RNA sequence: GGGAACGACUCGAGUAGAGUCGAAAAGCGUCUGGCCUGGAGGGUGAAGCUUCUCACCCGCAUCGAACUCGAUCUGAUGCAGCGCCUGCGGGAGACGGCGGAGGCCGAGGCUAUCCGGGUGUUCGCCCGGGAUUUACUGAUUCGUCAGUAAAUCCCGAAAAGAAACAACAACAACAAC
Reactivity to 2A3 in 0.01 (KOAc 150mM, MgCl2 10mM, bicine 150mM(pH8.5), 24C), signal-to-noise 5, nucleotides 027 to 126: g020c020g140u010c060u120g050g010c020c010u030g020g060a040g050g000g020u010g030a060a040g080c070u220u050c030u020c040a000c000c000c000g000c000a010u010c020g030a080a090c050u040c180g100a190u030c150u190g010a020u020g000c030a030g060c020g010c010c020u060g040c070g040g060g020a090g030a020c030g010g010c030g030g050a030g000g040c030c010g000a020g040g000c010u010a070u050c030c010g030g020g020u030g030u030u030c050g100c030c010
Reactivity to DMS in 0.01 (KOAc 150mM, MgCl2 10mM, bicine 150mM(pH8.5), 24C), signal-to-noise 6, nucleotides 027 to 126: g010c030g010u000c040u020g030g020c020c010u000g010g020a160g010g000g010u000g000a070a170g010c180u000u010c090u010c010a030c010c010c010g020c030a030u010c030g010a040a110c130u010c200g000a120u010c070u010g010a040u010g010c020a150g020c080g010c040c030u000g020c050g020g010g010a120g010a100c120g000g000c020g010g020a080g010g020c020c010g000a060g000g000c020u000a090u010c030c010g020g010g020u000g010u000u000c030g000c020c020
Chemical mapping of a 177-nucleotide RNA with 2A3 and DMS. For DMS the reverse transcriptase was MarathonRT. Conditions: 150 mM KOAc, 10 mM MgCl2 and 150 mM bicine (pH 8.5), 24 C. The data come from the RNA Mapping Database (RMDB), library OK2TST.